[RMDB]
RNA sequence: GGGAACGACUCGAGUAGAGUCGAAAAGUACCCCUCCGUCGACGCCCUGUACUCCUCGUCCUCCUCCUCGCGGACCAGGACGGCGAGAUCGCCGGGGUCAGGCUGGGGAAACGAGAGAAAGGGGAAGCGACCGUAUAACGUUCGCGUUAUACGGUCGAAAAGAAACAACAACAACAAC
Reactivity to DMS in 0.01 (KOAc 150mM, MgCl2 10mM, bicine 150mM(pH8.5), 24C), signal-to-noise 3, nucleotides 027 to 126: g020u000a140c040c000c010c020u000c040c020g000u010c100g000a170c190g010c000c040c000u000g000u020a150c040u000c090c040u010c020g000u000c080c060u000c010c040u000c020c060u000c300g000c100g010g000a030c000c030a070g090g010a090c030g010g010c050g030a210g000a070u010c010g020c000c020g020g030g000g000u010c020a030g000g070c050u010g000g010g040g000a010a120a020c030g010a050g010a110g010a030a090a210g010g010g000g000a110a160g010
Reactivity to 2A3 in 0.01 (KOAc 150mM, MgCl2 10mM, bicine 150mM(pH8.5), 24C), signal-to-noise 1, nucleotides 027 to 126: g040u100a080c000c000c000c010u030c000c000g130u090c080g050a060c010g110c000c000c000u020g020u070a030c010u070c060c010u020c000g000u000c030c030u010c010c010u070c000c000u030c050g040c000g030g030a010c010c000a040g130g120a120c030g000g030c010g000a080g080a130u300c000g000c010c000g020g010g010g000u010c000a010g060g050c030u050g000g020g000g000a000a000a030c020g010a010g000a000g040a110a040a040g030g010g000g000a010a030g090